[RMDB]
RNA sequence: GGGAACGACUCGAGUAGAGUCGAAAAGGCAGAGCCCCGCACCUUUGCGGGGUCCGGUGCGCUCCUGACGACCCUUGAAAAUCCGCGGGAAGGAAUAGUUUUCACGCCAGGUCGUACUCAUAACCGCGUGUGACAAUGUUUUCGAACAUUGUCACACAAAAGAAACAACAACAACAAC
Reactivity to 2A3 in 0.01 (KOAc 150mM, MgCl2 10mM, bicine 150mM(pH8.5), 24C), signal-to-noise 4, nucleotides 027 to 126: g070g020c060a030g030a040g070c010c000c000c020g000c040a090c040c120u180u190u300g000c010g000g000g000g000u000c000c010g000g040u040g010c040g000c050u050c010c020u020g000a000c020g050a050c040c000c000u010u050g090a050a060a030a080u060c030c010g040c040g030g060g080a050a070g070g020a080a010u100a120g090u030u030u010u070c050a050c070g010c010c030a010g000g020u000c010g000u050a070c040u080c060a080u120a160a060c040c020g060c020
Reactivity to DMS in 0.01 (KOAc 150mM, MgCl2 10mM, bicine 150mM(pH8.5), 24C), signal-to-noise 2, nucleotides 027 to 126: g000g010c080a090g000a300g020c000c000c000c020g000c020a090c300c210u020u050u000g000c000g000g030g020g010u000c000c020g000g000u000g020c000g030c020u000c000c010u020g000a100c010g000a120c040c010c050u020u010g000a050a060a040a120u030c090c040g030c070g000g000g030a160a100g010g000a160a110u030a120g020u000u010u010u030c020a040c060g020c050c090a110g000g000u000c000g000u000a030c090u020c130a040u040a070a100c030c050g020c270
This 177-nucleotide RNA was probed chemically with 2A3 and DMS. For DMS the reverse transcriptase was MarathonRT. For 2A3 the reverse transcriptase was SuperScript II with manganese. For 2A3, 3,216 sequencing reads were counted. Reactivities are given for positions 27 through 126. It was measured as part of the RMDB libraries RFM100 and RFMREP.